[RMDB]
RNA sequence: GGGAACGACUCGAGUAGAGUCGAAAAUCAGGGAGGUGCUUGAUGGUUGCUACAGUAUACUCAAGUUGGAUGAGUUCACGACUCACCUUCCCGGCAUUGUCCAGCGUGCGUUUGACAAAGCGAAGGACACGCUAUCAUGGUUCGCCAUGAUAGCGUGAAAAGAAACAACAACAACAAC
Reactivity to DMS in 0.01 (KOAc 150mM, MgCl2 10mM, bicine 150mM(pH8.5), 24C), signal-to-noise 3, nucleotides 027 to 126: u000c030a100g010g010g010a050g000g020u000g010c060u000u010g010a080u000g000g010u010u000g020c060u010a100c230a080g020u010a090u010a100c050u000c030a080a070g030u000u000g020g010a110u000g000a030g000u010u000c240a090c150g000a210c010u000c040a040c010c020u000u010c000c000c010g000g000c050a080u000u000g000u000c010c020a060g010c030g040u010g010c130g010u000u000u000g020a090c160a020a050a070g010c020g020a080a080g020g020a130
Reactivity to 2A3 in 0.01 (KOAc 150mM, MgCl2 10mM, bicine 150mM(pH8.5), 24C), signal-to-noise 2, nucleotides 027 to 126: u120c010a010g000g030g030a030g010g030u060g020c020u050u030g030a080u170g040g110u100u060g010c000u070a150c030a060g070u080a070u060a200c000u020c010a000a040g040u030u030g210g030a170u050g010a000g000u050u070c110a040c140g130a010c000u020c020a030c020c010u020u070c020c010c010g020g000c000a070u060u040g040u000c000c050a010g000c030g090u130g050c070g020u050u030u130g040a040c050a030a040a030g030c050g060a080a010g030g000a000